[RMDB]
RNA sequence: GGGAACGACUCGAGUAGAGUCGAAAAGGGGUCGCAUUCUUGGACCGUGAAUCACACGCUUGGAUUUAUACUGAAGCCUCCACGGUAUUGUCAGCGUGUGUGGCACGCUAGAAUGCGACGGAGGCACCCAAAAACGCCGAUCUUCGGAUCGGCGUAAGGAUUACAAUCACUUCGGUGAUUGUAAUCCAAAAGAAACAACAACAACAAC
Reactivity to 2A3 in 0.01 (KOAc 150mM, MgCl2 10mM, bicine 150mM(pH8.5), 24C), signal-to-noise 2, nucleotides 027 to 156: g010g020g050g000u000c000g000c010a010u000u020c020u060u110g080g170a270c170c070g030u050g030a050a130u150c000a000c000a010c010g000c040u120u210g090g010a060u130u300u090a040u110a000c010u020g040a110a040g000c010c010u020c020c000a040c040g000g000u000a000u030u040g050u050c040a010g000c030g000u030g000u000g000u050g050g100c010a000c020g000c010u000a000g020a020a010u000g000c000g000a000c000g000g000a000g000g030c010a030c000c000c000a040a120a030a000a010c000g030c030c000g000a000u000c000u020u070c220g170g000a000u000c020g000g000c010g000u010a010a010